[RMDB]
RNA sequence: GGGAACGACUCGAGUAGAGUCGAAAAUGCAUCUUUCUGCCAGGAGGAAGUCCGUCCCGGGCCCCGGGAACAGGACCUGCACGGGCACGUCCAAGCGGUACCAGCUCUGCAGAGUGCAGGUGAGGCCCUGGACAUUUCCAUUCGUGGAAAUGUCCAGAAAAGAAACAACAACAACAAC
Reactivity to DMS in 0.01 (KOAc 150mM, MgCl2 10mM, bicine 150mM(pH8.5), 24C), signal-to-noise 1, nucleotides 027 to 126: u000g010c070a110u020c050u000u010u000c030u000g020c000c120a100g010g020a110g000g000a120a140g000u000c040c050g020u000c020c060c000g010g010g020c040c080c000c040g000g000g000a110a020c100a100g010g000a020c050c020u000g010c000a060c110g000g000g030c000a100c190g010u000c050c020a130a190g000c080g000g000u020a060c060c040a300g030c040u000c020u000g010c040a070g060a180g010u020g000c000a070g000g000u000g000a080g020g020c010c030
The record gives the reactivity of an RNA of 177 nucleotides to DMS. For DMS the reverse transcriptase was MarathonRT. The reactions ran in a buffer of 150 mM KOAc, 10 mM MgCl2 and 150 mM bicine (pH 8.5), at 24 C.